The record gives the reactivity of an RNA of 207 nucleotides to DMS and 2A3. Reactivities are given for positions 27 through 156. DMS adducts were read by reverse transcription with MarathonRT. Conditions: 150 mM KOAc, 10 mM MgCl2 and 150 mM bicine (pH 8.5), 24 C.

RNA sequence: GGGAACGACUCGAGUAGAGUCGAAAAGGGGUCUGAUUUUCGACGAGGCAAAGACAUGCUCUGAAGCCUCCACGGAGCAACAGCUUUGCUACCCACCGUCGAUAUCAGACGGAGGCACCCAAAGUUUAUAUUUAGCUUUCGAGCUAAAUAUAAACAACGAGGUAAUACGAUUCGUCGUAUUACCUCGAAAAGAAACAACAACAACAAC
Reactivity to DMS in 0.01 (KOAc 150mM, MgCl2 10mM, bicine 150mM(pH8.5), 24C), signal-to-noise 2, nucleotides 027 to 156: g000g010g100g000u010c010u000g000a030u000u000u000u000c010g000a060c010g000a180g010g010c020a030a030a050g010a060c030a300u000g000c020u010c010u030g010a100a290g010c020c010u000c010c010a300c050g020g000a050g000c000a070a090c110a070g020c020u020u020u000g000c010u000a030c030c010c020a300c070c000g010u020c000g010a090u000a040u000c040a060g000a030c030g020g000a040g020g000c000a050c000c020c010a050a090a140g010u000u000u000a000u000a000u000u000u000a000g010c000u000u000u000c250g010a050g010c000u000a000a020a000u010a000u000a000a010a010c000a050a260
Reactivity to 2A3 in 0.01 (KOAc 150mM, MgCl2 10mM, bicine 150mM(pH8.5), 24C), signal-to-noise 5, nucleotides 027 to 156: g060g000g020g010u000c010u010g010a020u160u130u110u130c000g000a000c000g010a030g020g000c010a000a000a010g020a080c100a170u250g000c000u000c000u000g060a120a040g010c000c000u000c000c000a020c010g010g000a000g000c020a060a060c050a130g060c000u000u000u010g000c010u060a090c060c090c060a050c050c000g000u000c000g000a000u000a000u010c000a000g000a010c030g000g000a000g000g000c000a020c010c010c000a090a110a010g000u000u000u000a010u000a000u010u000u000a000g010c000u080u080u190c300g050a010g000c000u000a000a000a000u000a000u000a000a010a000c000a000a030